[RMDB]
RNA sequence: GGGAACGACUCGAGUAGAGUCGAAAAGAUAUGGACCAUACUAGGGAGCUCUGGGUCGGAAACGACCCUGAGCGACGAUCUAGGUGGUCCUAAGUCAAAAUCAUUUGACGCUUCGGCGUCAAAUGAACCAUUACUGAUACUUCGGUAUCAGUAAUGGAAAAGAAACAACAACAACAAC
Reactivity to 2A3 in 0.01 (KOAc 150mM, MgCl2 10mM, bicine 150mM(pH8.5), 24C), signal-to-noise 1, nucleotides 027 to 126: g010a010u030a020u110g000g000a000c010c010a050u160a300c200u010a010g150g100g150a110g040c000u000c010u060g020g000g000u000c000g030g000a030a030a000c000g000a000c000c000c000u020g000a000g000c010g010a020c040g010a020u010c010u000a000g000g020u000g010g010u000c000c000u000a010a000g000u000c020a000a020a020a300u060c000a000u000u000u020g010a010c020g020c030u080u120c300g110g000c000g000u000c010a000a000a000u000g000a000a020
Reactivity to DMS in 0.01 (KOAc 150mM, MgCl2 10mM, bicine 150mM(pH8.5), 24C), signal-to-noise 3, nucleotides 027 to 126: g000a010u000a100u000g000g000a000c000c000a020u000a110c010u000a000g010g010g020a160g010c000u000c000u000g000g000g030u000c000g010g000a020a020a050c000g010a020c000c000c000u000g000a010g020c000g010a050c300g010a080u000c000u000a010g020g030u010g000g000u000c000c000u000a010a060g000u000c020a120a120a100a160u000c000a020u000u000u000g000a020c000g010c000u000u020c260g050g020c010g020u000c000a000a010a010u000g000a030a180